This 207-nucleotide RNA was probed chemically with DMS and 2A3.

RNA sequence: GGGAACGACUCGAGUAGAGUCGAAAACGAGCAGUUCGCUGCUCGAUCUAGGGGUCAUAAACGUAUGAAUUAGUGAUGACCUACCUGAAGCCUCCACGGGUAGCAAGCUAAUCAAGUUUAUGACGGAGGCACCCGGUAAAGUCCAUUCGUGGACUAAACUCAAUUGAUAGUUCGCUAUCAAUUGAGUAAAAGAAACAACAACAACAAC
Reactivity to DMS in 0.01 (KOAc 150mM, MgCl2 10mM, bicine 150mM(pH8.5), 24C), signal-to-noise 3, nucleotides 027 to 156: c020g000a000g020c000a020g040u000u010c300g030c010u000g020c000u010c020g020a020u010c060u010a130g010g000g020g000u000c010a020u000a010a020a030c020g030u000a230u000g030a130a150u010u000a030g020u000g010a140u000g000a060c270c000u000a010c010c000u000g000a050a140g010c010c010u010c000c000a300c020g000g000g030u000a020g020c060a050a150g000c030u010a030a110u010c070a070a110g000u000u000u000a020u000g000a040c000g010g030a020g130g050c010a150c030c010c000g000g010u000a070a080a100g010u010c000c000a060u000u000c230g040u000g000g000a030c010u000a010a080
Reactivity to 2A3 in 0.01 (KOAc 150mM, MgCl2 10mM, bicine 150mM(pH8.5), 24C), signal-to-noise 9, nucleotides 027 to 156: c010g000a000g000c010a010g010u090u270c230g070c160u000g000c000u000c000g000a020u020c040u100a090g090g030g080g010u010c010a000u010a020a010a010c040g110u190a180u300g180a300a140u110u030a030g020u030g170a250u100g070a070c000c000u000a000c000c000u020g030a100a030g000c010c000u000c000c010a020c010g010g000g000u000a010g010c060a300a100g000c010u040a050a070u180c060a110a050g000u000u000u000a000u010g000a010c030g000g000a000g000g000c000a020c010c010c000g010g020u180a240a150a020g000u000c000c010a020u110u180c210g090u120g000g000a010c000u010a120a090

The 2A3 profile rests on 11,215 reads. The DMS profile rests on 7,111 reads. 2A3 adducts were read by reverse transcription with SuperScript II with manganese. Reactivities are given for positions 27 through 156.